RNA sequence: GGGAACGACUCGAGUAGAGUCGAAAAGAUAUGGAAUGCGUAGCUAGGCGUGUCGGAAACGACACCCUUGGACCUACACAUUCCUAAGUCAAAGUUGCCAGUUCAUGUUCGCAUGAACUGGCAACAACAAAUACAUACCGUUCGCGGUAUGUAUUUGAAAAGAAACAACAACAACAAC
Reactivity to 2A3 in 0.01 (KOAc 150mM, MgCl2 10mM, bicine 150mM(pH8.5), 24C), signal-to-noise 3, nucleotides 027 to 126: g010a020u070a020u130g000g010a010a010u010g000c020g010u010a010g020c020u020a000g010g010c140g090u000g000u000c010g000g020a060a080a050c010g010a000c000a010c000c000c000u000u060g030g050a110c020c000u010a000c010a000c000a000u000u000c000c000u010a090a010g070u070c080a140a050a090g000u000u010g000c000c010a000g010u020u010c000a010u010g060u040u100c300g020c220a000u000g000a000a000c010u000g010g000c000a000a000c000a000a000
Reactivity to DMS in 0.01 (KOAc 150mM, MgCl2 10mM, bicine 150mM(pH8.5), 24C), signal-to-noise 9, nucleotides 027 to 126: g000a020u000a300u010g010g000a020a000u000g020c040g010u000a010g010c030u000a010g010g010c300g020u000g010u000c000g000g000a070a080a160c000g010a010c000a010c010c030c000u000u000g020g000a100c300c000u000a010c000a030c000a010u000u000c000c000u010a010a090g010u000c030a100a100a130g010u000u000g010c000c000a000g000u000u000c000a000u000g010u000u010c220g010c000a010u000g000a000a000c000u000g000g000c000a000a000c000a050a140
Background
Chemical mapping of a 177-nucleotide RNA with 2A3 and DMS. 2A3 adducts were read by reverse transcription with SuperScript II with manganese. It was measured as part of the RMDB library TTRDEL. The reactions ran in a buffer of 150 mM KOAc, 10 mM MgCl2 and 150 mM bicine (pH 8.5), at 24 C.